[RMDB]
RNA sequence: GGGAACGACUCGAGUAGAGUCGAAAAAAAGAUAUGGACUCCACGACUCGAGGUACAGAGGAUCGCUCGGAAACGAGCGAUCUACCCACCUGUACUACCCACCGAGAAGUGGAGUCCUAAGUCAAAACAUCUGACUCUAGUUCGCUAGAGUCAGAUGAAAAGAAACAACAACAACAAC
Reactivity to DMS in 0.01 (KOAc 150mM, MgCl2 10mM, bicine 150mM(pH8.5), 24C), signal-to-noise 1, nucleotides 027 to 126: a010a060a070g000a010u000a100u000g000g010a010c010u000c010c000a030c000g020a160c000u000c000g000a060g000g000u000a000c000a030g040a140g020g000a040u000c030g040c000u000c000g000g000a050a030a090c010g020a000g070c000g030a000u000c000u010a020c120c030c080a300c010c000u010g010u020a000c010u010a120c140c070c030a300c170c020g010a000g000a180a300g010u020g050g000a010g000u020c000c000u000a010a010g050u010c000a180a040a070a290
An RNA of 177 nucleotides, treated with DMS and read out base by base.
Conditions: 150 mM KOAc, 10 mM MgCl2 and 150 mM bicine (pH 8.5), 24 C.
Reactivities are given for positions 27 through 126.